[RMDB]
RNA sequence: GGGAACGACUCGAGUAGAGUCGAAAAAUUGAUAUCUCCUUACCAAAUGGGCAUUGCUUGUUUCGCACAGUGACCUACGGUGGCAGUGCAUUGGACAAUGAUUUUUGGAUCCAGAGAAAGAAGAAGAAUAAAUAAUGGUCUUCGGACCAUUAUUUAUAAAAGAAACAACAACAACAAC
Reactivity to 2A3 in 0.01 (KOAc 150mM, MgCl2 10mM, bicine 150mM(pH8.5), 24C), signal-to-noise 3, nucleotides 027 to 126: a020u120u120g020a030u060a100u140c050u040c040c020u020u100a050c000c040a060a080a090u110g030g100g010c010a020u000u010g030c040u090u120g060u140u140u120c080g050c000a030c010a050g000u020g150a100c010c030u100a060c150g040g010u020g050g000c020a010g010u000g040c000a020u000u100g000g030a040c010a000a030u090g040a070u090u000u000u010u060g060g020a050u010c040c010a000g040a000g000a100a100a010g100a040a020g050a060a000g050a090
Reactivity to DMS in 0.01 (KOAc 150mM, MgCl2 10mM, bicine 150mM(pH8.5), 24C), signal-to-noise 5, nucleotides 027 to 126: a100u000u000g000a130u010a090u000c030u000c020c010u010u000a190c050c030a010a060a050u000g010g000g020c030a030u000u000g000c040u000u010g010u000u010u000c140g010c040a040c040a050g050u000g000a050c020c020u020a080c190g040g030u000g010g020c010a060g030u000g020c010a070u000u000g000g000a080c030a030a040u000g020a070u000u000u000u000u000g010g000a100u000c110c080a070g010a090g000a060a070a080g000a070a110g000a070a110g000a120